[RMDB]
RNA sequence: GGGAACGACUCGAGUAGAGUCGAAAAGAAGAAAAAGCGUCAAGACGACCUCGCACAGGCUGUGGAGCGAGGUAGCGCAUAAACGCUGAUAGAUACACAGCCUAAGGACAGAAGAACUGUCCACAAAGAUGAGGCACUGAUUCGUCAGUGCCUCAUCAAAAGAAACAACAACAACAAC
Reactivity to 2A3 in 0.01 (KOAc 150mM, MgCl2 10mM, bicine 150mM(pH8.5), 24C), signal-to-noise 2, nucleotides 027 to 126: g100a010a020g060a040a030a000a020a000g050c030g020u040c090a160a000g070a130c040g000a000c010c020u000c000g000c000a020c030a050g000g000c000u000g000u000g000g020a060g000c000g000a020g020g000u000a010g000c020g000c010a060u170a110a240a010c030g000c010u010g020a030u120a160g140a050u070a060c000a000c010a000g000c030c000u030a070a070g030g000a000c000a010g020a100a010g020a160a150c000u000g000u000c000c000a010c020a000a080a000
Reactivity to DMS in 0.01 (KOAc 150mM, MgCl2 10mM, bicine 150mM(pH8.5), 24C), signal-to-noise 2, nucleotides 027 to 126: g000a030a120g000a010a080a110a110a060g000c010g000u010c130a200a050g010a220c010g040a120c010c000u000c000g000c000a130c120a120g000g000c050u000g050u000g000g000a040g000c000g020a050g000g020u000a000g010c090g000c030a130u040a010a030a010c000g050c000u000g000a120u000a050g000a120u000a140c000a000c010a020g010c000c080u060a200a120g000g000a030c000a050g000a300a120g040a150a190c060u000g000u000c000c000a110c240a000a140a050
An RNA of 177 nucleotides, treated with 2A3 and DMS and read out base by base. 2A3 adducts were read by reverse transcription with SuperScript II with manganese. It was measured as part of the RMDB library OK1LIB.